This 177-nucleotide RNA was probed chemically with DMS and 2A3.
Conditions: 150 mM KOAc, 10 mM MgCl2 and 150 mM bicine (pH 8.5), 24 C.
[RMDB]
RNA sequence: GGGAACGACUCGAGUAGAGUCGAAAAUUUUAAAGCACCGUAUAUAUCUUCGCGUACUUCUAAGAUUCUUAAGUUGCUUAUAGAUAUGUUAUGUAAACUCAUGAUAUAAGUCACUUUACUUAUCAUAGAAUAAUCAUGUAUUCGUACAUGAUUAUUCAAAAGAAACAACAACAACAAC
Reactivity to DMS in 0.01 (KOAc 150mM, MgCl2 10mM, bicine 150mM(pH8.5), 24C), signal-to-noise 5, nucleotides 027 to 126: u010u010u000u000a000a050a060g010c030a030c020c010g020u000a070u010a150u000a080u020c120u000u000c040g020c150g030u000a030c020u000u000c130u000a030a050g010a050u010u000c070u000u000a020a040g010u000u000g000c000u000u000a020u000a020g010a200u010a030u000g000u000u000a070u010g010u010a090a060a060c130u010c060a020u000g010a130u000a030u000a020a030g000u010c180a020c040u000u000u010a080c130u000u000a070u000c040a090u000a170
Reactivity to 2A3 in 0.01 (KOAc 150mM, MgCl2 10mM, bicine 150mM(pH8.5), 24C), signal-to-noise 4, nucleotides 027 to 126: u000u010u020u040a020a010a000g000c010a020c040c010g090u000a080u010a020u010a040u130c100u060u040c040g020c040g050u010a030c000u030u000c020u050a030a040g010a070u050u040c020u060u070a000a010g010u020u020g010c000u020u030a020u010a040g040a080u120a020u180g010u030u060a130u150g160u090a070a060a040c030u040c040a020u040g030a000u020a010u010a050a010g010u010c030a010c020u030u070u070a090c030u090u130a110u150c010a120u040a130